[RMDB]
RNA sequence: GGGAACGACUCGAGUAGAGUCGAAAAAGUGCCUGAGCUGGUCGACGUCCAGCUCCCUCGGGACCUGCUGCUCUGGGCGGAAGAGUCUUCUGACACUUCUAGCCUAUUCAGCUUCGCGUCCUUGAGGCGCUUUAGCAUUGUUCGCAAUGCUAAAGCGAAAAGAAACAACAACAACAAC
Reactivity to 2A3 in 0.01 (KOAc 150mM, MgCl2 10mM, bicine 150mM(pH8.5), 24C), signal-to-noise 1, nucleotides 027 to 126: a000g070u070g080c020c010u000g010a010g000c010u010g020g030u160c150g160a120c100g070u030c010c020a000g000c000u000c010c000c000u000c000g000g000g010a000c010c050u070g020c020u010g020c000u010c010u020g010g000g020c010g020g010a010a010g000a010g010u000c000u240u070c120u250g040a000c010a010c040u000u000c000u010a170g000c000c000u000a010u030u060c010a000g000c000u000u040c010g030c050g020u000c010c000u010u230g010a000g000g000
Reactivity to DMS in 0.01 (KOAc 150mM, MgCl2 10mM, bicine 150mM(pH8.5), 24C), signal-to-noise 2, nucleotides 027 to 126: a070g010u000g010c030c010u000g000a000g020c000u000g000g000u010c100g020a200c280g030u000c020c020a000g000c000u000c000c010c010u000c030g000g000g010a010c000c040u000g000c000u000g010c050u000c010u000g000g010g020c010g030g000a010a010g010a090g010u000c000u010u020c290u010g020a020c000a070c010u010u000c000u000a140g010c000c000u000a000u010u010c010a040g020c010u010u000c200g010c190g020u000c000c000u000u010g030a030g010g010